[RMDB]
RNA sequence: GGGAACGACUCGAGUAGAGUCGAAAACGCGUUCAAGGAAAUGACCCUGUUGGAGCUCUCCGACUUCGUCAAGAAGUUCGAGGAGACCUUCGAGGUCACCGCCGCCGCUCCAGUCGCCGUCGCCGCCCGAUGGUCGGCUGUUCGCAGCCGACCAUCGAAAAGAAACAACAACAACAAC
Reactivity to DMS in 0.01 (KOAc 150mM, MgCl2 10mM, bicine 150mM(pH8.5), 24C), signal-to-noise 1, nucleotides 027 to 126: c030g070c120g000u020u060c080a070a150g010g080a000a000a220u000g000a050c000c000c000u030g000u020u000g000g000a300g000c080u000c050u000c020c000g000a000c000u000u100c000g030u030c300a070a100g000a000a020g000u000u000c090g000a040g000g000a000g060a250c010c000u090u100c040g000a080g000g180u000c000a030c080c020g060c000c020g040c000c050g050c040u040c130c000a140g000u000c190g000c000c010g060u000c040g020c000c000g000c110c000
Reactivity to 2A3 in 0.01 (KOAc 150mM, MgCl2 10mM, bicine 150mM(pH8.5), 24C), signal-to-noise 2, nucleotides 027 to 126: c050g040c010g030u070u130c060a090a060g080g050a040a140a190u140g000a020c000c000c030u030g050u000u050g040g030a190g130c000u020c020u000c020c000g000a000c000u000u000c010g120u060c110a030a150g010a010a000g020u030u120c020g050a080g010g000a000g000a010c000c000u000u000c000g090a100g000g020u000c030a030c000c000g040c000c020g020c000c000g000c000u010c030c000a050g060u090c000g000c030c000g050u040c040g000c010c010g020c000c030